[RMDB]
RNA sequence: GGGAACGACUCGAGUAGAGUCGAAAAACGGGCAGUGGCGAUGGCAACGCGGCAGCCGCAGGGUCGACUUCUUCGCAGCCGCAACAGACGGGUGACGGGCAAAGAGGGGCGCUCGUUCUGUUGGAAGAUCCGUCAGCAUUUUCGAAUGCUGACGGAUAAAAGAAACAACAACAACAAC
Reactivity to 2A3 in 0.01 (KOAc 150mM, MgCl2 10mM, bicine 150mM(pH8.5), 24C), signal-to-noise 3, nucleotides 027 to 126: a000c030g000g000g000c020a060g000u030g080g010c060g070a100u080g080g000c030a050a030c070g010c020g080g000c010a000g040c010c030g000c020a020g040g020g020u040c010g030a070c020u040u050c000u040u010c040g000c030a020g050c000c000g010c010a020a000c000a010g010a010c020g000g000g010u020g010a030c050g030g040g020c060a070a120a020g070a110g020g020g010g010c000g010c010u000c000g020u080u000c020u000g000u000u000g010g010a070a000g040
Reactivity to DMS in 0.01 (KOAc 150mM, MgCl2 10mM, bicine 150mM(pH8.5), 24C), signal-to-noise 1, nucleotides 027 to 126: a080c110g000g000g030c050a070g100u000g000g000c010g000a070u030g000g050c080a080a020c070g020c080g010g000c080a220g050c050c080g020c060a160g000g000g000u000c060g030a020c120u000u000c000u000u030c170g000c070a010g010c090c030g000c040a010a020c030a000g010a090c050g020g000g000u000g010a030c000g020g010g020c060a010a040a140g000a150g020g000g000g000c030g040c000u000c000g010u050u060c000u030g000u010u000g020g030a070a070g000